[RMDB]
Chemical mapping of a 177-nucleotide RNA with 2A3 and DMS.
The 2A3 profile rests on 958 reads.
It was measured as part of the RMDB library OK1LIB.
RNA sequence: GGGAACGACUCGAGUAGAGUCGAAAAAGCAAGAAGUAUAUGAUGUGAGUGAUAAUACAUAAUGAAAUGACCCAACAAGAGGGAAAGGAAGUUACAUGCCUUCACUACAGUCAUACAAAUAAAGCCAGUAAGAGGGGUAGUUCGCUACCCCUCUUACAAAAGAAACAACAACAACAAC
Reactivity to 2A3 in 0.01 (KOAc 150mM, MgCl2 10mM, bicine 150mM(pH8.5), 24C), signal-to-noise 2, nucleotides 027 to 126: a010g300c260a150a000g070a140a050g150u130a000u000a020u110g020a000u030g000u130g140a010g060u030g030a030u090a140a030u050a030c010a000u080a070a000u180g000a030a040a030u010g030a000c000c000c000a000a110c050a300a000g130a050g120g000g000a130a000a000g100g020a170a060g000u000u090a030c030a130u300g010c000c010u000u000c000a010c020u040a150c040a020g060u070c000a000u020a040c030a050a000a000u160a070a000a000g040c060c050a000
Reactivity to DMS in 0.01 (KOAc 150mM, MgCl2 10mM, bicine 150mM(pH8.5), 24C), signal-to-noise 2, nucleotides 027 to 126: a000g040c000a050a070g020a090a140g020u050a230u000a000u000g000a000u000g000u020g020a060g030u000g070a030u060a070a070u100a050c150a200u000a040a000u010g020a030a280a030u000g000a150c000c000c020a040a080c150a190a050g020a210g000g000g000a030a040a050g000g050a300a110g000u000u010a010c120a220u020g000c300c070u000u000c010a000c000u000a000c070a000g000u030c000a020u000a000c100a060a060a060u030a000a070a070g000c040c090a100